[RMDB]
RNA sequence: GGGAACGACUCGAGUAGAGUCGAAAACUUUCUGGACCCGAUGUCCAUCGCGUGCCGCGGGAUAAUGGAUUUCCACAACAGCCGUGGAACGAAGGUCAUCUUCAUGAGUGCGACGCCCCCAGGACGAUACACAAAUCCUAUUCGUAGGAUUUGUGUAAAAAGAAACAACAACAACAAC
Reactivity to 2A3 in 0.01 (KOAc 150mM, MgCl2 10mM, bicine 150mM(pH8.5), 24C), signal-to-noise 6, nucleotides 027 to 126: c010u060u120u080c030u070g080g040a060c010c040c050g040a070u070g020u010c020c010a070u090c080g010c020g090u060g050c040c020g020c020g000g030g060a140u110a100a070u100g060g030a060u090u090u030c010c020a060c010a140a030c020a060g100c030c040g010u010g020g010a020a020c030g060a050a010g030g010u070c030a050u020c030u090u040c040a090u120g080a030g070u090g030c040g060a050c050g040c020c000c000c000c000a010g020g040a030c030g010a010
Reactivity to DMS in 0.01 (KOAc 150mM, MgCl2 10mM, bicine 150mM(pH8.5), 24C), signal-to-noise 9, nucleotides 027 to 126: c120u010u000u010c080u010g010g000a110c060c040c070g010a090u000g010u000c020c010a080u000c100g020c060g020u000g020c040c030g020c040g000g000g000a070u010a100a110u000g010g000a270u010u000u000c020c010a040c050a080a150c230a100g000c050c060g030u000g010g000a050a040c080g000a080a060g010g010u000c060a050u010c010u000u010c070a060u010g010a090g010u000g010c040g010a060c060g010c030c010c010c010c020a100g000g000a060c120g010a210